[RMDB]
RNA sequence: GGGAACGACUCGAGUAGAGUCGAAAAGAGAACGGCAAGCUCUUAAUCGUAGGUAGAGCUUGCGUUCGCUCUACCUUACCACCGGAGCGAACUGUAGGGUCGGUGGUAUCGUGACUCUACAGUAAGGGCACGAUACGAUAUUGCUCUUACCGUUCAACGUGUGCAGCUUGUUCGCAAGCUGCAUGCGAAAAGAAACAACAACAACAAC
Reactivity to 2A3 in 0.01 (KOAc 150mM, MgCl2 10mM, bicine 150mM(pH8.5), 24C), signal-to-noise 9, nucleotides 027 to 156: g120a000g000a010a000c010g070g000c020a010a010g000c010u010c020u070u160a130a100u120c110g090u110a070g030g080u040a000g030a000g000c000u030u050g020c020g000u030u010c010g000c000u000c000u010a030c000c000u020u070a040c020c030a020c030c030g010g010a020g030c030g030a070a050c090u100g070u130a060g020g030g020u040c020g000g040u050g040g030u030a030u030c010g020u020g070a140c010u000c000u030a040c060a080g030u100a040a030g000g000g000c010a000c040g050a040u040a120c030g020a050u050a090u120u080g000c000u000c000u000u010a020c000c010g000u000u000c010a020a010
Reactivity to DMS in 0.01 (KOAc 150mM, MgCl2 10mM, bicine 150mM(pH8.5), 24C), signal-to-noise 5, nucleotides 027 to 156: g010a100g000a020a020c010g030g020c040a020a120g010c010u010c000u000u000a120a100u010c130g020u000a100g030g020u000a030g000a020g020c010u000u010g000c120g020u000u000c080g000c000u000c010u000a140c020c010u010u000a110c040c040a080c030c040g010g010a050g020c030g010a050a090c050u000g020u000a070g020g020g020u000c020g020g000u000g030g020u000a010u000c040g020u000g010a080c000u000c010u000a100c020a190g020u000a070a050g010g000g010c010a060c040g010a130u000a070c060g020a130u000a150u000u000g000c010u010c020u000u000a040c010c010g010u000u010c020a070a160